[RMDB]
The data come from the RNA Mapping Database (RMDB), library M2PK50. The record gives the reactivity of an RNA of 177 nucleotides to 2A3 and DMS.
RNA sequence: GGGAACGACUCGAGUAGAGUCGAAAAUCCUUCCUUUUCGAAGGAAGGACAGUGCACAGUCUUCGCAUCUGUGAAUCACACAACAGCCCUGUCUAUGCGAGGUUUUAAUCAAGUUCGCUUGAUUAAACCGUGACAGUACGUUCGCGUACUGUCACGGAAAAGAAACAACAACAACAAC
Reactivity to 2A3 in 0.01 (KOAc 150mM, MgCl2 10mM, bicine 150mM(pH8.5), 24C), signal-to-noise 1, nucleotides 027 to 126: u030c000c000u010u010c000c000u090u030u110u120c250g120a000a000g000g000a000a000g000g010a000c030a020g000u020g000c020a000c000a010g040u030c030u060u000c100g030c010a020u020c020u000g000u010g010a050a100u120c020a030c000a010c000a110a170c030a080g000c000c000c020u070g070u110c050u070a060u020g010c000g030a020g000g000u020u040u030u010a010a010u010c000a010a010g000u050u070c170g090c080u000u010g000a010u000u010a000a010a010
Reactivity to DMS in 0.01 (KOAc 150mM, MgCl2 10mM, bicine 150mM(pH8.5), 24C), signal-to-noise 1, nucleotides 027 to 126: u000c000c000u020u000c000c000u000u000u000u000c210g030a000a000g010g000a000a010g000g000a000c090a020g000u000g000c030a020c000a010g000u000c040u000u000c020g000c010a080u000c000u000g010u000g000a150a060u010c120a140c040a040c050a080a030c090a240g020c020c010c000u000g010u020c130u010a030u000g020c060g010a040g000g010u010u000u000u000a000a000u000c000a000a020g010u000u000c230g000c020u000u010g010a000u010u000a000a000a030